[RMDB]
RNA sequence: GGGAACGACUCGAGUAGAGUCGAAAACAGCUAUGUGGGAGGCUGAGAUGGGAGGAUCACUUGAGCCCAGGAGGUAGAGGCCGCAGUGAGCCAUGAUUGCUCCACUGAACUCCAGCCUGUGUGACAGGUCAGAUUAUGUCUUCGGACAUAAUCUGACAAAAGAAACAACAACAACAAC
Reactivity to 2A3 in 0.01 (KOAc 150mM, MgCl2 10mM, bicine 150mM(pH8.5), 24C), signal-to-noise 2, nucleotides 027 to 126: c010a040g000c040u090a040u300g080u090g060g040g000a040g070g000c040u000g030a040g000a140u110g030g020g000a040g000g040a020u010c030a000c080u050u120g050a000g050c000c010c010a040g010g090a060g000g050u110a080g010a100g130g060c010c020g040c060a010g020u000g030a020g000c040c020a090u070g040a110u030u200g010c020u060c020c020a030c020u030g020a060a010c000u010c010c000a040g020c000c000u020g020u030g000u020g090a030c020a010g020
Reactivity to DMS in 0.01 (KOAc 150mM, MgCl2 10mM, bicine 150mM(pH8.5), 24C), signal-to-noise 2, nucleotides 027 to 126: c040a070g010c020u000a030u000g020u000g020g020g020a080g010g010c060u000g010a120g030a080u010g000g000g000a030g000g000a090u000c040a030c090u000u000g010a080g030c020c050c020a080g000g000a060g010g010u010a130g010a170g000g020c070c080g000c060a150g000u000g000a060g020c050c090a140u010g000a080u000u000g000c020u000c050c050a080c010u010g010a060a070c040u010c050c050a080g000c000c020u000g000u000g000u000g000a120c130a030g010
The data come from the RNA Mapping Database (RMDB), library OK2TST. Chemical mapping of a 177-nucleotide RNA with 2A3 and DMS. The reactions ran in a buffer of 150 mM KOAc, 10 mM MgCl2 and 150 mM bicine (pH 8.5), at 24 C. For DMS, 1,700 sequencing reads were counted. For 2A3 the reverse transcriptase was SuperScript II with manganese. The 2A3 profile rests on 1,469 reads.